[RMDB]
Overview:
This 177-nucleotide RNA was probed chemically with DMS and 2A3. For DMS the reverse transcriptase was MarathonRT. For DMS, 1,104 sequencing reads were counted. The 2A3 profile rests on 1,926 reads.

RNA sequence: GGGAACGACUCGAGUAGAGUCGAAAAGAUAUGGAGGCUUGAUUGUCAGCUUACCAUCGGAAACGAUGGAUAAGCUUGGAUUUAUCACUGGCCUCCUAAGUCAAAGCAGUCAGUUCGCUGACUGCAACAGACUCAACGUGUUCGCACGUUGAGUCUGAAAAGAAACAACAACAACAAC
Reactivity to DMS in 0.01 (KOAc 150mM, MgCl2 10mM, bicine 150mM(pH8.5), 24C), signal-to-noise 1, nucleotides 027 to 126: g030a040u020a300u020g000g010a010g000g010c000u020u000g000a010u000u010g000u000c020a000g020c000u000u000a020c000c000a000u020c000g000g000a120a100a270c000g000a020u000g000g030a110u000a000a000g000c010u000u020g000g030a010u000u000u000a000u000c000a040c300u010g020g010c000c000u000c010c000u010a010a140g000u000c100a080a120a260g010c020a010g040u000c000a050g000u000u000c300g000c000u030g000a020c020u000g000c000a060a060
Reactivity to 2A3 in 0.01 (KOAc 150mM, MgCl2 10mM, bicine 150mM(pH8.5), 24C), signal-to-noise 1, nucleotides 027 to 126: g000a020u050a040u190g000g000a010g000g040c040u130u050g040a060u090u040g040u070c030a010g020c000u000u010a030c000c000a000u000c040g000g030a070a090a010c020g010a000u010g000g150a190u000a010a000g020c000u010u070g060g000a000u000u300u130a040u020c030a020c190u080g090g030c000c000u000c000c000u000a000a000g010u000c010a000a000a170g000c010a010g000u010c000a000g020u050u180c300g040c160u000g000a010c000u000g000c010a000a000